Chemical mapping of a 177-nucleotide RNA with DMS and 2A3. For DMS the reverse transcriptase was MarathonRT. Reactivities are given for positions 27 through 126. For 2A3, 4,000 sequencing reads were counted. For DMS, 1,594 sequencing reads were counted.

[RMDB]
RNA sequence: GGGAACGACUCGAGUAGAGUCGAAAAGAUAUGGAUCGAACAAGGGCAUCGAUCGAGUCCUUCGGAAACGAAGGCUCGGGAGCCUGUUCGAUCCUAAGUCAAAGCGGUGUUCUUCGGAACACCGCAAGUGCUUUAAACUGUUCGCAGUUUAAAGCACAAAAGAAACAACAACAACAAC
Reactivity to DMS in 0.01 (KOAc 150mM, MgCl2 10mM, bicine 150mM(pH8.5), 24C), signal-to-noise 1, nucleotides 027 to 126: g000a020u000a010u020g000g000a020u000c010g000a010a010c040a100a270g040g030g020c010a300u000c220g000a010u000c020g010a000g000u000c000c040u000u010c000g020g000a000a000a000c000g030a010a000g000g010c000u000c010g000g000g020a010g050c010c000u000g000u000u000c000g000a000u000c000c000u000a000a020g000u000c000a070a090a180g020c000g020g010u000g010u000u010c000u000u000c250g020g010a020a000c000a000c000c000g000c000a010a020
Reactivity to 2A3 in 0.01 (KOAc 150mM, MgCl2 10mM, bicine 150mM(pH8.5), 24C), signal-to-noise 2, nucleotides 027 to 126: g010a000u020a000u040g000g000a000u000c000g010a020a010c020a200a290g290g000g050c090a180u300c300g000a030u010c000g000a030g060u240c000c010u000u010c000g010g000a010a020a010c000g000a000a020g010g000c000u000c000g010g000g010a020g030c000c020u040g030u010u000c000g000a010u020c000c010u010a000a000g000u000c030a120a110a070g000c000g000g000u010g000u000u010c010u030u060c300g160g020a000a020c000a000c000c000g000c010a000a000